Conditions: 150 mM KOAc, 10 mM MgCl2 and 150 mM bicine (pH 8.5), 24 C. An RNA of 177 nucleotides, treated with DMS and 2A3 and read out base by base. The DMS profile rests on 1,136 reads. For 2A3 the reverse transcriptase was SuperScript II with manganese. For 2A3, 2,519 sequencing reads were counted.
RNA sequence: GGGAACGACUCGAGUAGAGUCGAAAAGAUAUGGAAGUUGAAUCUCGAUAAGCUGAUGUCGGAAACGACAUACCAGCUUUUGACGAGACAACUUCCUAAGUCAAAGGUGUAGCUUCGGCUACACCAAGUUGCAGUGUACGUUCGCGUACACUGCAACAAAAGAAACAACAACAACAAC
Reactivity to DMS in 0.01 (KOAc 150mM, MgCl2 10mM, bicine 150mM(pH8.5), 24C), signal-to-noise 1, nucleotides 027 to 126: g000a020u000a250u050g000g010a000a000g000u000u030g000a170a230u000c010u000c010g010a170u000a020a020g030c000u000g080a040u000g000u000c000g000g020a010a040a050c000g010a020c000a000u000a080c300c030a030g020c000u010u000u010u020g000a220c050g020a010g000a110c010a030a030c000u000u000c000c000u000a000a030g020u000c020a140a140a180g000g020u010g020u010a000g020c010u000u010c240g020g000c000u000a040c000a000c010c010a000a060
Reactivity to 2A3 in 0.01 (KOAc 150mM, MgCl2 10mM, bicine 150mM(pH8.5), 24C), signal-to-noise 2, nucleotides 027 to 126: g010a010u010a000u040g030g000a010a040g020u050u010g100a300a300u050c010u000c010g150a190u050a300a010g010c000u070g000a000u030g000u010c010g000g000a060a010a010c030g030a000c000a020u070a240c110c030a010g000c000u000u080u010u110g100a020c000g000a000g000a020c000a000a000c000u030u000c000c000u000a040a010g000u000c040a150a070a130g010g000u030g000u010a010g010c000u060u110c300g120g000c000u000a000c000a000c000c000a010a000